[RMDB]
RNA sequence: GGGAACGACUCGAGUAGAGUCGAAAAAGCUGAACCGCGAAACCUUAUGUCACGAUGACAUGAAGUAGGUUAUUUAUUUGGCGCAGGAUUACUUAGUUUAUAUAUAACCAUCCGAGAAAUAAUGCAAAUAGCAAACUGAUUUCGAUCAGUUUGCUAUAAAAGAAACAACAACAACAAC
Reactivity to 2A3 in 0.01 (KOAc 150mM, MgCl2 10mM, bicine 150mM(pH8.5), 24C), signal-to-noise 2, nucleotides 027 to 126: a000g020c030u010g010a040a030c050c000g030c050g060a110a010a000c000c000u010u050a010u060g000u030c000a030c200g300a210u300g020a000c010a010u030g030a000a030g070u070a020g050g010u040u020a070u010u160u030a090u000u070u150g050g000c040g000c060a040g080g000a080u020u100a070c030u050u000a010g030u060u060u040a140u000a000u020a020u010a110a040c000c010a030u020c080c040g020a040g000a100a060a040u210a060a040u180g050c000a140a050
Reactivity to DMS in 0.01 (KOAc 150mM, MgCl2 10mM, bicine 150mM(pH8.5), 24C), signal-to-noise 3, nucleotides 027 to 126: a070g020c040u000g000a060a090c090c050g010c060g020a100a090a080c040c030u010u020a030u000g010u010c000a180c270g030a210u000g020a010c010a000u000g000a050a050g010u000a100g010g010u000u000a080u000u000u000a030u020u000u010g020g020c050g010c130a100g010g000a050u000u010a070c050u010u000a120g000u010u000u000a030u010a090u010a030u000a090a100c030c030a100u000c100c040g010a080g010a090a050a090u000a060a080u000g010c090a090a100